RNA sequence: GGGAACGACUCGAGUAGAGUCGAAAAUGAUACAGCAGGACUGGUACGAGGCGCAUCUUCGGAAAGAGUGCAUGAGACUUCAAGUCGAGGACCGAGCCGGUAACAUCUUCGCGCUUGAGACCUUCGCCCUGUCCCGAGGAUUCGUCCUCGGGACAGGAAAAGAAACAACAACAACAAC
Reactivity to DMS in 0.01 (KOAc 150mM, MgCl2 10mM, bicine 150mM(pH8.5), 24C), signal-to-noise 1, nucleotides 027 to 126: u010g010a160u000a020c170a090g080c000a170g000g000a180c100u000g000g060u000a050c020g090a000g000g000c140g000c160a100u000c010u010u030c120g000g000a010a230a070g040a000g000u000g010c000a080u000g000a160g010a000c030u000u000c030a000a040g070u000c000g000a010g000g000a050c080c000g000a140g000c180c140g030g000u020a150a000c130a160u030c000u000u000c000g120c290g000c000u060u000g000a030g000a020c160c060u010u000c080g000c050
Reactivity to 2A3 in 0.01 (KOAc 150mM, MgCl2 10mM, bicine 150mM(pH8.5), 24C), signal-to-noise 3, nucleotides 027 to 126: u090g060a010u040a050c060a020g060c070a040g010g070a030c030u030g020g010u090a040c040g020a030g050g020c050g030c030a050u090c030u030u080c100g040g030a040a080a020g090a090g020u080g050c000a060u140g060a060g020a080c010u090u090c190a120a030g030u010c000g020a030g020g020a030c080c020g020a030g000c010c030g000g050u090a170a060c040a050u010c030u010u020c000g000c040g010c000u000u050g000a030g030a110c020c000u060u090c050g040c030
Conditions: 150 mM KOAc, 10 mM MgCl2 and 150 mM bicine (pH 8.5), 24 C. The record gives the reactivity of an RNA of 177 nucleotides to DMS and 2A3. The 2A3 profile rests on 1,587 reads. High 2A3 reactivity points to a flexible backbone, as in loops and unpaired stretches. DMS adducts were read by reverse transcription with MarathonRT. Source: RMDB library OK1LIB, as collected in RNAgym.